An RNA of 207 nucleotides, treated with DMS and read out base by base.
RNA sequence: GGGAACGACUCGAGUAGAGUCGAAAAUUCAAAAAUGCUUUGGAAUGGUUGGGACUGUGUUUUGAAAUAAAGUAGAGUUUAAAAGUCAAAAAGCAAAAGAGAACAUUCAGGAAAAAAAAUACAUUUGCAUUCUUCAUGCACUGUUUGGCUUUUUCCAUAAUGGGUAAUACUUCGGUAUUACCCAUUAAAAAGAAACAACAACAACAAC
Reactivity to DMS in 0.01 (KOAc 150mM, MgCl2 10mM, bicine 150mM(pH8.5), 24C), signal-to-noise 1, nucleotides 027 to 156: u020u010c050a000a080a070a190a170u000g000c050u000u020u000g030g020a110a070u020g020g030u020u000g020g000g010a100c070u000g000u000g020u000u020u000u010g010a120a100a130u000a050a080a090g000u000a170g000a080g010u010u010u000a060a070a070a070g020u010c000a020a000a040a020a060g030c040a030a050a060a090g000a080g000a040a090c020a040u000u000c090a060g030g020a000a000a000a080a160a140a120a200u010a040c080a080u000u010u000g040c040a060u010u000c030u000u010c080a110u000g020c010a080c100u020g020u000u010u000g030g020c060u020u000u000u000u000c090c010a210

Conditions: 150 mM KOAc, 10 mM MgCl2 and 150 mM bicine (pH 8.5), 24 C.